[RMDB]
RNA sequence: GGGAACGACUCGAGUAGAGUCGAAAAAGUGGAAUUACACUAUUGCCAUCACUGGCGGUACCGAAUGAAAGAAAGCGUGAUGGUGUUUGUUAUCUGGAAUGCUACAAGCCAGUACCAAAGCGCACCAGUUGUACGGGAUAUUCGUAUCCCGUACAACAAAAGAAACAACAACAACAAC
Reactivity to 2A3 in 0.01 (KOAc 150mM, MgCl2 10mM, bicine 150mM(pH8.5), 24C), signal-to-noise 3, nucleotides 027 to 126: a000g080u080g050g060a180a300u240u120a090c020a000c020u040a080u010u110g030c000c000a040u070c030a020c070u050g050g000c030g000g030u030a020c010c010g040a120a080u220g160a120a100a110g120a110a130a010g020c010g040u040g000a060u040g010g100u000g040u050u140u150g080u050u060a060u070c030u030g020g020a090a050u180g140c060u120a080c000a040a040g040c000c000a000g000u020a000c010c010a030a000a000g000c010g000c030a030c040c010a050
Reactivity to DMS in 0.01 (KOAc 150mM, MgCl2 10mM, bicine 150mM(pH8.5), 24C), signal-to-noise 3, nucleotides 027 to 126: a030g040u050g000g010a140a060u010u020a140c020a060c020u000a090u000u000g010c000c000a050u000c160a100c300u000g000g020c040g000g000u000a080c030c000g010a110a080u010g000a080a040a070g020a080a110a070g000c060g020u000g010a300u000g000g010u000g020u000u020u000g030u020u010a020u010c010u000g020g020a050a050u000g010c230u020a100c150a070a120g010c040c050a030g000u000a040c070c030a020a080a280g000c030g040c020a050c070c070a080

Chemical mapping of a 177-nucleotide RNA with 2A3 and DMS. For 2A3, 1,660 sequencing reads were counted. 2A3 adducts were read by reverse transcription with SuperScript II with manganese. In probing experiments dimethyl sulfate is read out at A N1 and C N3, which are open when not base-paired. For DMS the reverse transcriptase was MarathonRT. Reactivities are rounded to 0.1 and cut off at 0 and 3.